[RMDB]
RNA sequence: GGGAACGACUCGAGUAGAGUCGAAAACGGCCAAUGAUCACAUCAAUGCUUUUAUUAGAGCUUUCAGGGUUGAUGCUCUCGCUUUCAAUCGCAAUGCUUUCACGGCUAAACACAUAACCUUUUUUGCGUGCCUAUAAAUAUUCGUAUUUAUAGGCACAAAAGAAACAACAACAACAAC
Reactivity to DMS in 0.01 (KOAc 150mM, MgCl2 10mM, bicine 150mM(pH8.5), 24C), signal-to-noise 7, nucleotides 027 to 126: c150g010g010c020c020a080a130u000g010a050u010c060a060c040a100u000c110a070a070u000g000c020u000u010u000u010a130u020u000a100g010a050g010c020u000u000u010c120a080g010g010g010u000u000g010a050u010g010c020u000c080u010c140g000c060u000u000u000c100a050a070u000c080g010c050a070a080u010g010c030u010u000u000c060a070c160g000g000c020u000a040a070a070c140a060c120a070u000a070a100c080c040u000u000u000u010u000u000g010c300
Reactivity to 2A3 in 0.01 (KOAc 150mM, MgCl2 10mM, bicine 150mM(pH8.5), 24C), signal-to-noise 7, nucleotides 027 to 126: c040g040g000c010c010a050a140u140g020a040u050c040a010c010a070u050c040a050a110u100g000c010u080u120u080u100a180u150u230a050g030a010g040c000u060u120u140c060a060g140g050g000u040u040g050a030u050g020c010u030c010u020c090g030c020u040u140u080c040a040a050u040c010g020c080a040a060u060g020c010u010u050u100c040a020c040g010g000c020u050a030a130a010c090a000c010a090u230a140a120c020c020u040u040u020u030u070u100g040c030